[RMDB]
RNA sequence: GGGAACGACUCGAGUAGAGUCGAAAAGUGACACUGUUCGCAGUGUCACAAAGUGGUGGAUCUAGAACCACAAUAACUAGAUCAAAGAUCUAGUCUAGAUCUAAAGCAUACAGUUCGCUGUAUGCAACGCUUAGAGUGGGUUCGCCCACUCUAAGCGAAAAGAAACAACAACAACAAC
Reactivity to 2A3 in 0.01 (KOAc 150mM, MgCl2 10mM, bicine 150mM(pH8.5), 24C), signal-to-noise 1, nucleotides 027 to 126: g020u020g000a000c000a010c000u010g030u050u060c170g020c140a010g000u000g020u000c000a000c000a000a020a000g110u100g010g100u060g000g000a010u010c010u030a010g000a050a030c030c010a020c040a050a020u200a010a010c010u000a000g000a010u000c000a120a260a060g020a010u000c010u000a000g070u010c050u010a000g000a000u020c020u100a120a100a020g010c000a000u000a000c020a000g000u050u070c160g000c100u000g000u010a010u000g040c000a020a010
Reactivity to DMS in 0.01 (KOAc 150mM, MgCl2 10mM, bicine 150mM(pH8.5), 24C), signal-to-noise 1, nucleotides 027 to 126: g000u000g000a010c000a010c000u010g050u010u020c120g010c010a010g030u010g000u000c000a000c000a020a070a030g010u000g040g040u000g000g000a000u000c030u000a000g000a080a170c060c110a060c240a030a080u000a050a030c030u000a030g000a010u000c000a130a140a150g000a050u000c000u000a000g000u000c030u000a000g000a000u000c070u010a050a090a150g000c000a000u000a000c010a000g000u000u010c300g000c060u000g020u000a020u000g010c000a050a050

The data come from the RNA Mapping Database (RMDB), library M2PK50. Chemical mapping of a 177-nucleotide RNA with 2A3 and DMS. The reactions ran in a buffer of 150 mM KOAc, 10 mM MgCl2 and 150 mM bicine (pH 8.5), at 24 C. 2A3 adducts were read by reverse transcription with SuperScript II with manganese. The 2A3 profile rests on 1,597 reads.